Source: RMDB library TTRDEL, as collected in RNAgym. An RNA of 177 nucleotides, treated with 2A3 and DMS and read out base by base.
[RMDB]
RNA sequence: GGGAACGACUCGAGUAGAGUCGAAAAGAUAUGGACGGGCUCGAUAAGUCGCAAUCGGAAACGAUUGGCGACUUUUGACGAGCAGUCCUAAGUCAAAUCAGGCUAACUCUUCGGAGUUAGCCUGAAACCAAUUCUAGGAGUUCGCUCCUAGAAUUGGAAAAGAAACAACAACAACAAC
Reactivity to 2A3 in 0.01 (KOAc 150mM, MgCl2 10mM, bicine 150mM(pH8.5), 24C), signal-to-noise 2, nucleotides 027 to 126: g000a010u040a030u110g020g010a000c030g090g300g000c010u000c010g050a060u010a150a050g010u000c010g000c000a000a010u000c010g010g030a110a040a040c010g010a020u010u100g300g050c040g000a010c000u020u000u000u020g060a010c010g000a000g030c020a010g000u010c010c000u000a050a020g050u010c010a000a040a220u040c020a000g000g010c010u010a010a010c000u030c030u130u150c300g030g000a000g020u010u000a000g000c000c000u000g000a000a000a000
Reactivity to DMS in 0.01 (KOAc 150mM, MgCl2 10mM, bicine 150mM(pH8.5), 24C), signal-to-noise 2, nucleotides 027 to 126: g000a030u000a290u010g020g010a010c000g000g010g010c010u000c000g010a110u000a040a010g000u000c010g000c010a020a000u000c000g000g000a080a090a130c000g000a010u000u010g040g010c000g010a010c000u000u010u010u000g010a180c100g010a010g020c000a150g000u000c000c000u000a020a110g000u000c050a080a120a160u010c020a010g020g000c000u000a000a010c000u000c000u000u010c220g020g010a030g000u000u000a000g010c010c000u010g000a000a050a200